[RMDB]
RNA sequence: GGGAACGACUCGAGUAGAGUCGAAAACACUACAAGCAAUCCUAUACAACCGCAUCGGAGACAUUGGAUUUGUCCUAUCCAUAGCAUGAUUCCUAACCCACUCAAACGCAUGAGAUCUUCAACAAAUCUUUAUACUAAACAAUGAAUGCCCAAACAUAGACAUUCGUAAGUUCGCUUACGAAUGUCUAAAAGAAACAACAACAACAAC
Reactivity to 2A3 in 0.01 (KOAc 150mM, MgCl2 10mM, bicine 150mM(pH8.5), 24C), signal-to-noise 3, nucleotides 027 to 156: c020a000c040u190a030c050a060a000g060c010a040a090u050c020c010u070a050u040a120c110a090a060c040c050g040c040a060u050c050g010g010a040g030a030c070a060u050u090g050g000a010u030u030u140g040u000c000c020u040a050u000c020c000a020u020a030g020c030a040u100g040a060u060u050c000c010u020a070a090c020c010c000a070c020u070c060a030a070a040c100g040c050a030u060g020a010g000a160u040c050u020u070c030a050a060c010a030a080a040u000c000u020u080u030a130u040a050c090u140a070a130a030c040a070a040u120g020a110a020u070g020c000c000c020a060a050a020c030a030u040
Structure probing data (2A3) for a 207-nucleotide construct. Conditions: 150 mM KOAc, 10 mM MgCl2 and 150 mM bicine (pH 8.5), 24 C. The data come from the RNA Mapping Database (RMDB), library PDB130. Reactivities are rounded to 0.1 and cut off at 0 and 3. For 2A3, 1,580 sequencing reads were counted.